[RMDB]
RNA sequence: GGGAACGACUCGAGUAGAGUCGAAAACGGCAUCGGAUCUCGGGAACGUCCCUCGAGACCGGUCGUAACGGCAGCUCGGAGAUCGAGGAUGACAACGGGUUCGACCCUCGGGACGUGCGGGUUACCGUCACCCUUCACCUUUCGAGGUGAAGGGUGAAAAAGAAACAACAACAACAAC
Reactivity to DMS in 0.01 (KOAc 150mM, MgCl2 10mM, bicine 150mM(pH8.5), 24C), signal-to-noise 1, nucleotides 027 to 126: c010g000g000c050a090u000c040g010g020a130u000c000u000c000g040g000g000a120a090c130g000u000c120c050c000u000c000g010a030g000a060c000c000g000g010u000c040g020u010a060a100c140g000g000c010a080g000c040u000c020g040g010a160g000a150u010c010g000a050g000g000a110u000g000a040c020a100a210c010g000g000g010u000u010c050g010a090c020c000c010u000c000g020g000g000a060c060g010u000g000c000g000g000g010u010u000a060c030c020g030
Reactivity to 2A3 in 0.01 (KOAc 150mM, MgCl2 10mM, bicine 150mM(pH8.5), 24C), signal-to-noise 2, nucleotides 027 to 126: c010g030g000c030a100u100c070g240g000a300u000c010u010c000g000g000g000a120a040c060g170u080c000c000c000u000c010g010a010g000a000c010c020g010g000u020c010g040u020a130a030c020g000g020c040a020g000c020u020c010g040g020a140g030a080u190c010g040a010g030g010a090u120g010a040c050a110a040c080g120g000g000u040u030c030g020a060c020c030c010u020c000g010g030g040a040c020g000u010g050c030g000g050g000u070u050a060c010c030g010